The record gives the reactivity of an RNA of 177 nucleotides to 2A3. The RNA was probed in 150 mM KOAc, 10 mM MgCl2 and 150 mM bicine (pH 8.5) at 24 C.

[RMDB]
RNA sequence: GGGAACGACUCGAGUAGAGUCGAAAAGGAGAUCGAAGAAGACCGACGUCAGCACGGUCCGGAUGUAGGUCCGCAUGCAUCCAAGUUGACGAAACUUAACGAUUUCCAAAGCGGACAAGAAGUCAAAAGUCCAUACGACGUUCGCGUCGUAUGGACUAAAAGAAACAACAACAACAAC
Reactivity to 2A3 in 0.01 (KOAc 150mM, MgCl2 10mM, bicine 150mM(pH8.5), 24C), signal-to-noise 1, nucleotides 027 to 126: g050g040a000g030a000u040c040g010a100a020g040a160a000g000a090c020c020g010a060c060g110u240c050a000g130c090a000c050g030g030u000c000c090g000g000a000u000g000u010a000g020g000u010c000c000g010c000a000u000g000c000a000u000c000c000a040a000g000u010u010g100a080c210g000a010a000a000c000u000u000a060a120c000g000a000u010u000u000c000c010a000a080a050g060c020g000g000a000c000a000a100g260a000a000g070u110c130a050a050a050
Reactivities are rounded to 0.1 and cut off at 0 and 3. 2A3 adducts were read by reverse transcription with SuperScript II with manganese.